[RMDB]
An RNA of 177 nucleotides, treated with 2A3 and DMS and read out base by base. Conditions: 150 mM KOAc, 10 mM MgCl2 and 150 mM bicine (pH 8.5), 24 C. For 2A3, 2,759 sequencing reads were counted. For DMS, 3,874 sequencing reads were counted. It was measured as part of the RMDB library OK2TRN. DMS adducts were read by reverse transcription with MarathonRT.

RNA sequence: GGGAACGACUCGAGUAGAGUCGAAAAGCAGAAAGAAAGGCUGGAAAACAUAUACACGUUAGAGCCUAAGACUAAGUACAUGUAUACCAAUGGAGCUUUUGAGCCACCUAUAAGACAAGGGAGAGCAACAUAUCUCCCGAUUCGUCGGGAGAUAUGUAAAAGAAACAACAACAACAAC
Reactivity to 2A3 in 0.01 (KOAc 150mM, MgCl2 10mM, bicine 150mM(pH8.5), 24C), signal-to-noise 3, nucleotides 027 to 126: g000c020a030g110a070a110a010g090a070a100a020g080g010c030u050g040g160a070a110a060a030c060a010u220a000u050a140c070a010c160g040u050u060a040g020a010g100c010c020u030a060a040g030a030c030u040a070a050g040u030a040c030a060u080g070u110a070u050a100c030c000a040a070u100g060g000a080g050c000u020u090u020u140g060a020g030c020c000a040c000c000u090a100u060a250a070g060a040c060a020a040g020g010g000a120g000a000g010c010a030
Reactivity to DMS in 0.01 (KOAc 150mM, MgCl2 10mM, bicine 150mM(pH8.5), 24C), signal-to-noise 5, nucleotides 027 to 126: g010c010a110g010a100a090a160g010a080a120a100g020g000c020u000g010g000a060a080a090a080c100a070u000a070u010a070c100a090c120g010u000u010a110g000a040g020c040c040u010a080a090g010a080c040u000a040a080g000u000a030c070a040u000g010u000a050u000a090c060c070a060a090u000g040g010a100g010c050u000u000u000u020g000a090g020c030c050a070c060c030u000a060u010a060a090g000a050c110a060a050g000g000g020a090g010a080g000c140a090